[RMDB]
RNA sequence: GGGAACGACUCGAGUAGAGUCGAAAAACCAGUCGGUUCGCCGACUGGUCUGCGCUCUGUUGGUGUAGUCCGGCCAAUCAUAUCACCCUCUCACGGUGAUGACCAGGGUUCGAAUCCCUGACGGAGCACCAUUCGUAAAGUAGCUUCGGCUACUUUAUCUAUUCACCAACUUCGGUUGGUGAAUAGAAAAAGAAACAACAACAACAAC
Reactivity to DMS in 0.01 (KOAc 150mM, MgCl2 10mM, bicine 150mM(pH8.5), 24C), signal-to-noise 2, nucleotides 027 to 156: a010c010c000a030g040u000c010g030g000u020u000c300g030c020c000g040a010c010u000g010g000u000c000u000g010c050g020c000u010c020u010g010u010u000g010g000u030g010u000a130g030u000c060c020g030g010c050c080a120a100u000c050a090u000a110u000c020a030c000c000c050u000c220u020c210a160c110g010g120u010g000a090u000g010a100c070c030a110g010g000g020u000u000c070g020a300a090u010c000c000c010u000g000a060c010g040g020a050g010c010a030c000c020a130u000u010c060g050u000a010a030a040g020u000a020g010c010u000u000c300g070g030c000u000a000c000u000u000u000a030
Reactivity to 2A3 in 0.01 (KOAc 150mM, MgCl2 10mM, bicine 150mM(pH8.5), 24C), signal-to-noise 2, nucleotides 027 to 156: a000c010c000a010g000u020c010g030g050u040u110c210g090c070c000g000a000c000u000g000g000u020c000u060g090c070g010c020u030c030u020g050u050u030g000g020u030g000u030a060g100u080c060c050g020g100c080c020a110a020u030c010a020u080a020u130c000a000c000c030c040u190c020u060c090a070c080g000g000u000g000a000u010g000a000c010c000a010g020g000g000u000u040c020g030a040a020u040c000c010c010u000g020a010c010g030g000a000g020c000a020c000c020a080u120u130c040g080u100a030a010a010g000u000a010g010c010u050u030c200g080g000c000u000a000c000u000u000u000a000